The data come from the RNA Mapping Database (RMDB), library M2RFPK. This 207-nucleotide RNA was probed chemically with 2A3 and DMS. The 2A3 profile rests on 3,075 reads. Values cover nucleotides 27 to 156. For DMS the reverse transcriptase was MarathonRT.
[RMDB]
RNA sequence: GGGAACGACUCGAGUAGAGUCGAAAAGAUCUUUUGUCCGGAAUGGUUCCGCCGUGAUCGGGCCAUGCAAUAGUUGCCAACGACAACUAUGCUCCGGUUGCUCAGGCAGCGUAACGCUGCUUGAAAGAUGACGGCAAUCGCUUCGGCGAUUGCCGAACCAUCUUAUUCUCUUCGGAGAAUAAGAUGGAAAAGAAACAACAACAACAAC
Reactivity to 2A3 in 0.01 (KOAc 150mM, MgCl2 10mM, bicine 150mM(pH8.5), 24C), signal-to-noise 5, nucleotides 027 to 156: g050a060u070c030u040u150u090u150g090u070c030c010g000g010a080a070u080g020g020u300u300c010c020g000c070c100g150u240g070a260u150c010g000g000g000c010c010a020u060g030c010a050a290u010a020g000u000u000g020c030c090a170a070c190g090a180c030a000a000c020u000a000u010g020c000u000c010c000g050g000u040u130g010c010u020c010a000g000g000c000a010g000c010g100u150a110a060c250g000c010u010g000c000u000u000g010a010a010a000g050a040u110g040a030c030g000g000c000a000a000u010c000g000c010u050u030c170g120g010c000g000a010u000u000g000c010c000g000a000a000
Reactivity to DMS in 0.01 (KOAc 150mM, MgCl2 10mM, bicine 150mM(pH8.5), 24C), signal-to-noise 2, nucleotides 027 to 156: g020a070u000c050u000u010u000u010g010u000c020c020g020g000a120a050u000g010g010u000u000c030c010g030c040c080g020u030g020a040u010c020g000g010g040c030c010a090u000g000c060a130a060u000a040g020u010u000g000c010c040a210a200c300g000a110c010a010a020c000u000a010u000g020c020u000c020c020g010g010u000u000g020c050u000c020a050g000g000c000a010g010c000g030u000a060a120c100g010c000u000g020c000u000u010g000a070a130a110g020a120u000g030a230c000g010g000c000a000a020u000c010g030c020u000u000c280g050g000c030g000a000u000u000g010c010c010g010a010a020

Source information:
Values are in units of 0.01, from 0 to 300, in steps of 10.